[RMDB]
An RNA of 207 nucleotides, treated with 2A3 and DMS and read out base by base. Conditions: 150 mM KOAc, 10 mM MgCl2 and 150 mM bicine (pH 8.5), 24 C. For 2A3 the reverse transcriptase was SuperScript II with manganese. The data come from the RNA Mapping Database (RMDB), library RNAMAK. The 2A3 profile rests on 11,612 reads.
RNA sequence: GGGAACGACUCGAGUAGAGUCGAAAAGGUUACGUUCGCGUAACCAAAAAAUCCUAAGUCGAGCUUUGAUCGUGUGCAAGCAUCGAUCUAUCGGAAACGAUAGGGAGCUUGGGCACGGGAGCUCGAUAUGGAAAAAAGAUACCGUUCGCGGUAUCAAGUAUAACAAUGAGUUCGCUCAUUGUUAUACAAAAGAAACAACAACAACAAC
Reactivity to 2A3 in 0.01 (KOAc 150mM, MgCl2 10mM, bicine 150mM(pH8.5), 24C), signal-to-noise 7, nucleotides 027 to 156: g010g000u000u000a010c010g010u030u090c170g000c010g100u020a000a000c000c020a000a020a010a000a010a040u050c030c000u050a100a010g030u000c000g010a010g000c030u190u130u110g090a170u270c010g000u020g010u060g210c000a000a010g000c010a190u300c030g070a080u020c010u000a000u000c000g040g030a110a040a060c020g000a000u000a000g010g010g010a010g000c000u000u010g010g060g020c000a000c000g010g010g000a000g000c000u000c000g000a000u010a010u020g010g050a030a080a020a010a020a060g010a000u020a000c020c000g020u030u070c280g010c010g140g000u000a000u000c000a000a020
Reactivity to DMS in 0.01 (KOAc 150mM, MgCl2 10mM, bicine 150mM(pH8.5), 24C), signal-to-noise 3, nucleotides 027 to 156: g010g010u000u000a000c010g030u000u020c300g040c010g020u010a020a070c010c000a020a000a030a110a070a070u000c010c010u010a090a240g010u000c020g010a010g030c020u000u000u000g010a110u010c020g010u000g040u000g020c020a020a030g010c010a220u000c110g000a080u000c000u000a020u000c000g010g000a170a130a260c020g000a030u000a000g010g000g000a030g040c030u000u000g000g000g000c000a030c010g010g000g020a010g020c000u000c020g030a000u000a070u010g010g010a000a080a110a100a120a110g000a030u000a020c000c000g020u000u000c290g020c010g010g010u010a000u000c000a030a170